[RMDB]
RNA sequence: GGGAACGACUCGAGUAGAGUCGAAAAUGGUGAAUGAUGAGGAAAAUCAGAUAAGGUUUGUGACAUUGCCGAAGAAGCCCUACAGUGCCCCAGUGUCCCAGAUGGAGUCCAUCCCAGCAACCUCAGAUCCACAUGUUAGUUUCGACUAACAUGUGGAAAAAGAAACAACAACAACAAC
Reactivity to 2A3 in 0.01 (KOAc 150mM, MgCl2 10mM, bicine 150mM(pH8.5), 24C), signal-to-noise 1, nucleotides 027 to 126: u150g000g030u020g080a070a050u030g010a020u060g050a080g010g090a130a090a060a110u090c040a060g090a120u180a120a070g080g050u040u100u080g040u030g020a000c000a020u040u090g050c030c030g010a070a010g020a030a000g110c000c000c000u030a060c060a030g090u020g020c010c000c000c010a000g050u000g030u170c000c010c040a030g010a080u100g050g020a030g050u000c000c010a040u050c030c000c000a010g010c020a030a040c010c010u040c010a050g050a080
Reactivity to DMS in 0.01 (KOAc 150mM, MgCl2 10mM, bicine 150mM(pH8.5), 24C), signal-to-noise 3, nucleotides 027 to 126: u000g010g010u000g010a100a070u010g010a090u020g000a070g000g030a150a070a080a050u010c060a060g010a110u000a080a120g000g000u000u000u000g030u010g010a070c060a030u000u010g020c020c010g000a100a110g010a100a100g000c030c030c030u000a080c110a070g010u010g000c040c020c040c040a060g010u000g000u000c030c040c020a120g010a100u000g000g000a080g010u000c040c060a150u010c020c010c030a100g020c090a030a050c040c040u000c110a090g010a180